[RMDB]
Source information
Structure probing data (2A3 and DMS) for a 177-nucleotide construct. For DMS the reverse transcriptase was MarathonRT. Reactivities are given for positions 27 through 126. For 2A3, 1,743 sequencing reads were counted. Source: RMDB library M2PK90, as collected in RNAgym. The RNA was probed in 150 mM KOAc, 10 mM MgCl2 and 150 mM bicine (pH 8.5) at 24 C. The DMS profile rests on 2,462 reads.
RNA sequence: GGGAACGACUCGAGUAGAGUCGAAAAAGAAAUAGAUGAAGUAGGAGGCUGUUAGCGCUCUAGUGUGUCUUCAGAUAAGAUAUGUCUGGCCUACUUCAUCGGAAACAUAGGACCAACGCUAAAAAAAUGAACAUACGUAGUUCGCUACGUAUGUUCAAAAAGAAACAACAACAACAAC
Reactivity to 2A3 in 0.01 (KOAc 150mM, MgCl2 10mM, bicine 150mM(pH8.5), 24C), signal-to-noise 2, nucleotides 027 to 126: a000g090a000a020a010u090a010g000a000u010g000a000a000g000u000a010g010g020a020g060g130c050u040g070u300u070a050g030c020g020c090u030c070u090a050g000u020g010u010g000u110c010u020u050c100a010g030a180u190a060a060g050a060u090a000u120g070u050c000u000g030g000c000c000u000a000c000u010u000c000a000u000c000g000g000a010a030a010c060a050u130a060g000g070a010c000c030a020a010c060g070c190u110a000a050a040a020a020a030a120
Reactivity to DMS in 0.01 (KOAc 150mM, MgCl2 10mM, bicine 150mM(pH8.5), 24C), signal-to-noise 3, nucleotides 027 to 126: a090g000a060a060a140u010a110g000a010u010g000a010a010g010u000a010g000g040a230g010g020c020u000g000u000u010a030g030c060g020c120u000c110u000a040g000u000g000u010g020u000c000u020u000c140a100g000a070u010a050a080g010a090u010a050u000g010u000c010u000g020g010c030c000u000a010c000u000u000c020a000u000c000g020g000a100a060a090c150a090u010a090g000g000a100c000c050a050a090c080g020c050u010a010a010a040a080a060a100a150